[RMDB]
RNA sequence: GGGAACGACUCGAGUAGAGUCGAAAAUCUGCCUAGCGCUGGCGUCUACAGGAGUGUUCAAUCCAAUGAUACUUGCAGCUGGGCUAAUGGCUUGCGACCCCAACCGCAAGCGGGGCUGGCCUGCUACCCAUAAGGCUGGGUUCGCCCAGCCUUAUGGAAAAGAAACAACAACAACAAC
Reactivity to 2A3 in 0.01 (KOAc 150mM, MgCl2 10mM, bicine 150mM(pH8.5), 24C), signal-to-noise 4, nucleotides 027 to 126: u050c030u050g010c010c010u020a020g000c000g000c030u010g050g000c010g020u000c010u040a090c110a140g030g040a050g050u200g210u180u230c090a080a090u020c010c000a030a020u110g000a010u010a040c020u020u050g010c060a110g000c060u020g010g020g000c000u030a080a100u120g050g020c010u000u010g000c010g040a130c020c020c000c000a030a020c020c000g030c050a020a000g000c000g000g000g000g000c060u070g010g020c000c020u010g000c020u050a050c000
Reactivity to DMS in 0.01 (KOAc 150mM, MgCl2 10mM, bicine 150mM(pH8.5), 24C), signal-to-noise 2, nucleotides 027 to 126: u010c200u010g020c010c010u010a000g060c040g000c030u010g000g040c030g000u000c010u000a070c300a180g000g030a040g000u040g010u070u030c180a200a150u000c070c030a160a260u000g000a020u000a120c070u000u000g030c020a050g020c000u000g020g000g000c030u000a000a020u070g010g000c010u000u000g010c030g000a050c020c000c000c000a120a120c300c000g000c020a020a010g000c000g000g040g000g000c050u000g010g000c000c000u020g010c000u020a090c190